Overview
Structure probing data (2A3 and DMS) for a 177-nucleotide construct. The 2A3 profile rests on 827 reads. For DMS, 1,422 sequencing reads were counted. For DMS the reverse transcriptase was MarathonRT. Source: RMDB library M2PK90, as collected in RNAgym.
RNA sequence: GGGAACGACUCGAGUAGAGUCGAAAAUUUUGGGCAGAUAACAACUGUUACGCGUCUUGCCACUGUAUUGUUAACACUACAACAAAUUUUAAGUUUAAUACACCUACGCGACAAGAUGAAUCGGAAAUAUCCUGUUACUCUUCGGAGUAACAGGAUAAAAAGAAACAACAACAACAAC
Reactivity to 2A3 in 0.01 (KOAc 150mM, MgCl2 10mM, bicine 150mM(pH8.5), 24C), signal-to-noise 1, nucleotides 027 to 126: u030u000u120u100g070g010g000c000a030g010a060u090a130a050c020a000a030c040u070g060u090u090a090c090g000c000g000u000c010u030u050g000c000c010a050c050u030g020u010a030u120u000g010u050u010a010a000c050a010c080u190a030c030a250a000c030a150a140a130u080u080u140u210a210a050g030u000u010u100a070a030u070a040c000a020c040c000u060a020c030g040c020g010a040c050a020a020g000a020u080g040a050a120u070c030g050g000a070a090a000
Reactivity to DMS in 0.01 (KOAc 150mM, MgCl2 10mM, bicine 150mM(pH8.5), 24C), signal-to-noise 2, nucleotides 027 to 126: u000u000u000u010g000g000g040c030a070g000a080u010a110a070c210a130a100c030u000g000u000u010a040c140g020c090g020u000c030u000u000g000c040c020a060c100u020g010u010a040u020u000g010u000u000a090a050c160a040c050u020a030c100a050a100c140a050a040a130u040u000u000u000a020a130g000u000u000u010a080a040u000a050c120a060c120c050u000a040c100g030c040g010a000c060a030a030g000a020u000g000a040a070u000c090g010g000a110a070a120